[RMDB]
RNA sequence: GGGAACGACUCGAGUAGAGUCGAAAAUCGUGAGAUGUGGUGCCUCACGCGCUCGAGGCGUCCGUGGUCAGAGAGACCACUGACGCAAAAACUCGAGCGCAAAUAAAAUGCAUUACAUCGAGAAUAACAGCACUACCGUAUUCGUACGGUAGUGCUGAAAAGAAACAACAACAACAAC
Reactivity to 2A3 in 0.01 (KOAc 150mM, MgCl2 10mM, bicine 150mM(pH8.5), 24C), signal-to-noise 1, nucleotides 027 to 126: u060c010g040u070g100a150g000a020u050g000u040g000g000u010g030c000c020u090c010a010c110g000c000g000c000u010c000g010a000g010g000c000g020u010c000c000g000u000g000g000u000c050a030g110a030g030a050g010a240c000c010a000c010u010g000a000c000g000c000a030a000a130a070a000c000u000c000g000a000g030c010g000c000a010a000a000u050a010a060a010a000u260g010c000a040u000u000a000c000a000u020c000g040a050g050a110a140u240a130a070
Reactivity to DMS in 0.01 (KOAc 150mM, MgCl2 10mM, bicine 150mM(pH8.5), 24C), signal-to-noise 1, nucleotides 027 to 126: u020c140g010u020g000a090g000a020u000g000u000g000g030u000g050c000c220u010c030a260c300g000c020g000c100u030c000g000a000g000g000c020g040u000c000c180g000u000g000g000u000c000a250g000a100g000a230g000a000c000c000a000c000u000g000a000c000g000c050a050a000a050a080a250c020u010c000g030a000g000c000g060c000a010a040a160u000a000a030a030a250u130g000c000a010u000u000a010c000a020u000c010g000a040g000a030a100u000a080a180